[RMDB]
RNA sequence: GGGAACGACUCGAGUAGAGUCGAAAAAACGCUGGGUCCCUGGGAGCAGUGAAGUCUAGUCUAACGAGACUGAAGCGCGCACGGUCUCGUAAUCUAGUCACACUGCGUUGAUCAGGGACCUGUGCUGAAGCGCGCACGGCAACCGAAAGGUGCGAAACCUCUAGUCCUACUUCGGUAGGACUAGAGGAAAAGAAACAACAACAACAAC
Reactivity to 2A3 in 0.01 (KOAc 150mM, MgCl2 10mM, bicine 150mM(pH8.5), 24C), signal-to-noise 1, nucleotides 027 to 156: a000a000c060g000c000u010g000g010g050u010c010c000c020u000g000g000g000a020g000c010a000g000u000g050a260a050g020u010c000u020a000g000u020c070u130a050a000c010g000a000g000a000c000u000g020a220a020g000c000g020c010g010c030a050c020g070g020u000c020u000c000g040u040a050a060u110c010u000a000g000u010c020a010c000a000c030u010g090c010g030u140u020g020a010u020c000a000g000g000g070a010c000c000u020g000u030g060c040u080g040a090a030g040c000g020c020g000c000a000c040g100g000c040a130a080c000c000g010a140a030a020g000g000u030g000c010g000a120a040a080